[RMDB]
This 177-nucleotide RNA was probed chemically with 2A3. It was measured as part of the RMDB library RFM100. 2A3 adducts were read by reverse transcription with SuperScript II with manganese. Reactivities are given for positions 27 through 126.

RNA sequence: GGGAACGACUCGAGUAGAGUCGAAAAACAUCCCCUCUACCGAUCUCGGGUGGACGCUUGCCCUCCCUUCGUGGAGGUUCCUGGUCUCCGCGCGAUUACACGCCGGCGACUCAAGGCACCUACACGAGCAAUCUGAGGGUUUCGACCCUCAGAUUGCAAAAGAAACAACAACAACAAC
Reactivity to 2A3 in 0.01 (KOAc 150mM, MgCl2 10mM, bicine 150mM(pH8.5), 24C), signal-to-noise 3, nucleotides 027 to 126: a000c030a080u070c020c000c010c010u000c000u000a020c000c020g070a160u050c050u090c110g020g000g000u020g100g010a050c020g040c100u030u120g030c000c000c000u020c000c000c000u060u000c020g000u000g010g000a000g010g000u000u010c000c000u000g020g000u000c000u000c000c010g040c020g000c000g110a060u110u150a110c080a020c070g020c000c000g000g000c000g010a010c010u020c160a040a020g000g010c010a000c000c000u010a000c010a000c020g010a000